[RMDB]
RNA sequence: GGGAACGACUCGAGUAGAGUCGAAAAAGUGCCGUACUCGCCCUUGCCGACUUCGCCGAACGGCAUGUUGUGUCGCACGAUCUUGCGCUCGGUGCCGUCGUCGUCGGUGAUGACGUUGAGCGCUACGAGCUUUUGGCCGUUUCGACGGCCAAAAGCUAAAAGAAACAACAACAACAAC
Reactivity to DMS in 0.01 (KOAc 150mM, MgCl2 10mM, bicine 150mM(pH8.5), 24C), signal-to-noise 1, nucleotides 027 to 126: a090g000u000g000c020c060g020u000a040c080u020c040g010c040c040c070u000u000g000c060c000g020a090c080u010u000c090g000c280c020g000a080a080c040g000g000c020a020u000g030u010u000g030u000g000u010c040g040c080a060c140g010a050u010c060u010u000g000c020g020c010u000c020g000g020u040g020c120c020g020u000c000g000u000c050g030u000c120g020g000u000g010a010u000g020a040c010g020u000u000g030a130g020c010g020c000u000a050c100g000